RNA sequence: GGGAACGACUCGAGUAGAGUCGAAAAAUAUUUUGGAUUGCUAAAAUCGUACCUGGAAGAAUGGAGGUUCGCUGUGCGCUUUCAUUCAGCAAUUUCCACCGAGCACAAUGUGGCAGCUGGUGUUCCACAGCGGCAUAUAUUUCGAUAUAUGCCGCUGAAAAGAAACAACAACAACAAC
Reactivity to DMS in 0.01 (KOAc 150mM, MgCl2 10mM, bicine 150mM(pH8.5), 24C), signal-to-noise 3, nucleotides 027 to 126: a110u060a050u000u000u020u000g000g010a090u020u030g030c060u010a070a040a080a070u010c080g010u010a090c080c000u000g000g000a070a090g010a030a020u010g000g010a050g000g010u010u040c090g000c070u000g000u000g000c130g020c000u000u010u000c050a060u020u000c020a090g000c070a050a050u010u020u010c000c000a060c090c120g030a110g010c030a040c100a050a030u010g010u020g010g000c100a090g040c030u030g020g010u010g000u010u000c030c050a100
Reactivity to 2A3 in 0.01 (KOAc 150mM, MgCl2 10mM, bicine 150mM(pH8.5), 24C), signal-to-noise 5, nucleotides 027 to 126: a000u230a100u040u090u050u050g070g000a030u000u050g050c050u170a110a040a050a150u090c080g020u060a090c020c000u010g060g050a040a040g030a050a040u030g020g000a040g000g020u080u090c030g030c090u100g070u090g080c020g000c010u020u010u050c000a020u060u000c020a010g020c010a020a070u030u030u040c020c000a030c020c040g020a010g020c030a030c010a090a210u150g020u110g070g010c020a010g010c040u050g010g030u020g020u040u000c010c010a030